Chemical mapping of a 177-nucleotide RNA with 2A3 and DMS.
Values cover nucleotides 27 to 126.
The RNA was probed in 150 mM KOAc, 10 mM MgCl2 and 150 mM bicine (pH 8.5) at 24 C.
In probing experiments dimethyl sulfate is read out at A N1 and C N3, which are open when not base-paired.
For 2A3 the reverse transcriptase was SuperScript II with manganese.
RNA sequence: GGGAACGACUCGAGUAGAGUCGAAAAGCGCUGCCGCACCACCUGCACACCGAUGUCGCCAUUGCCUGUGCUGAGGCGGGCAAGCAUAUCAUGAUAGAAAAGCCCAUGGCGCCGACCGUUGCGGAGAGACUAAUAUUAGGUUCGCCUAAUAUUAGUCAAAAGAAACAACAACAACAAC
Reactivity to 2A3 in 0.01 (KOAc 150mM, MgCl2 10mM, bicine 150mM(pH8.5), 24C), signal-to-noise 7, nucleotides 027 to 126: g030c030g020c040u060g030c020c010g020c010a040c020c010a030c000c020u040g000c030a020c000a010c030c030g060a040u090g050u110c050g020c050c010a040u060u070g010c000c010u070g010u060g020c060u100g020a040g070g000c000g000g000g000c010a030a010g020c010a020u050a020u130c070a050u120g150a070u070a190g120a060a080a020a010g030c000c010c020a030u050g040g000c020g010c010c010g020a030c010c030g050u050u080g010c020g020g010a030g010a010
Reactivity to DMS in 0.01 (KOAc 150mM, MgCl2 10mM, bicine 150mM(pH8.5), 24C), signal-to-noise 9, nucleotides 027 to 126: g010c070g020c040u000g020c030c030g010c040a100c060c040a110c080c030u000g010c040a070c070a080c100c030g000a050u010g020u010c090g020c070c040a100u000u010g010c040c020u000g020u000g020c060u010g000a080g010g010c020g010g000g010c020a050a060g010c070a070u010a100u000c070a090u000g010a150u010a110g000a050a090a130a120g000c020c040c030a110u000g010g010c030g010c030c020g010a100c070c050g010u000u000g010c020g000g010a130g010a210